Chemical mapping of a 177-nucleotide RNA with DMS and 2A3. For 2A3, 9,225 sequencing reads were counted.
RNA sequence: GGGAACGACUCGAGUAGAGUCGAAAAGCGACGAGUGCGACCGCGCCUGGCACGCUCACGAUGCCGGUUUUGUGGAUCUGUACACCGCCCGCGAUCGAGGCGCGCUCGAGUGGGCGGUGAGCACGCCACAUCUAACUCUGUUCGCAGAGUUAGAUGUAAAAGAAACAACAACAACAAC
Reactivity to DMS in 0.01 (KOAc 150mM, MgCl2 10mM, bicine 150mM(pH8.5), 24C), signal-to-noise 4, nucleotides 027 to 126: g010c050g010a080c060g000a090g020u010g000c020g010a080c060c030g020c060g000c060c020u020g000g010c030a040c070g010c100u000c110a080c050g010a130u010g000c030c010g010g000u010u000u010u010g030u000g010g000a100u030c060u000g030u020a130c010a010c010c010g000c000c000c010g000c030g020a110u000c020g000a030g020g000c150g010c090g000c010u000c000g000a050g000u000g000g000g000c000g000g000u000g000a060g000c020a040c110g000c050c060
Reactivity to 2A3 in 0.01 (KOAc 150mM, MgCl2 10mM, bicine 150mM(pH8.5), 24C), signal-to-noise 7, nucleotides 027 to 126: g070c040g110a110c040g030a080g090u070g000c020g040a040c010c030g010c010g020c020c010u020g020g010c020a010c040g030c050u120c070a110c080g090a100u040g010c010c000g010g010u070u070u060u150g060u030g010g040a120u060c060u130g020u040a020c010a010c010c000g000c000c010c000g020c010g050a050u040c020g000a000g040g090c200g010c080g050c190u000c010g000a010g000u020g000g010g000c000g000g000u010g000a000g000c010a010c020g010c010c010
DMS adducts were read by reverse transcription with MarathonRT.